[RMDB]
RNA sequence: GGGAACGACUCGAGUAGAGUCGAAAAAUGAGAUGCGGAUUAGGGCCGGGUUGAUGGGGCAAGGGGACAAUCAAGUGGUCAGGAUAUACAUGCCCCUCUACAGAUGGAACAAUUAUGAACUCACGGAGGUAUAUAUCAUAUUCGUAUGAUAUAUACCAAAAGAAACAACAACAACAAC
Reactivity to 2A3 in 0.01 (KOAc 150mM, MgCl2 10mM, bicine 150mM(pH8.5), 24C), signal-to-noise 8, nucleotides 027 to 126: a000u210g010a060g030a050u100g030c040g040g030a030u040u170a080g030g010g040c030c030g030g020g000u040u070g070a130u120g020g000g010g000c010a070a060g030g000g010g010a010c020a010a080u200c020a050a090g160u050g060g020u050c020a030g070g030a030u050a010u020a180c020a040u080g010c000c000c040c000u010c000u020a030c010a030g090a100u120g010g020a070a000c020a020a020u140u140a100u270g060a060a030c010u010c060a040c080g060g030a080
Reactivity to DMS in 0.01 (KOAc 150mM, MgCl2 10mM, bicine 150mM(pH8.5), 24C), signal-to-noise 6, nucleotides 027 to 126: a080u020g010a070g020a060u010g020c050g010g000a080u020u030a110g000g010g000c070c070g010g020g000u010u010g000a080u010g000g000g010g020c080a050a070g000g010g000g000a060c120a060a090u020c110a080a100g020u010g000g010u000c030a060g000g010a060u030a050u010a080c080a090u030g010c020c010c010c010u010c070u010a050c080a060g010a090u000g020g000a070a070c140a060a050u020u040a070u020g000a070a110c070u020c040a070c140g000g010a210
This 177-nucleotide RNA was probed chemically with 2A3 and DMS. For DMS the reverse transcriptase was MarathonRT. It was measured as part of the RMDB library OK1LIB. The DMS profile rests on 15,161 reads. Conditions: 150 mM KOAc, 10 mM MgCl2 and 150 mM bicine (pH 8.5), 24 C. 2A3 adducts were read by reverse transcription with SuperScript II with manganese. The 2A3 profile rests on 12,118 reads.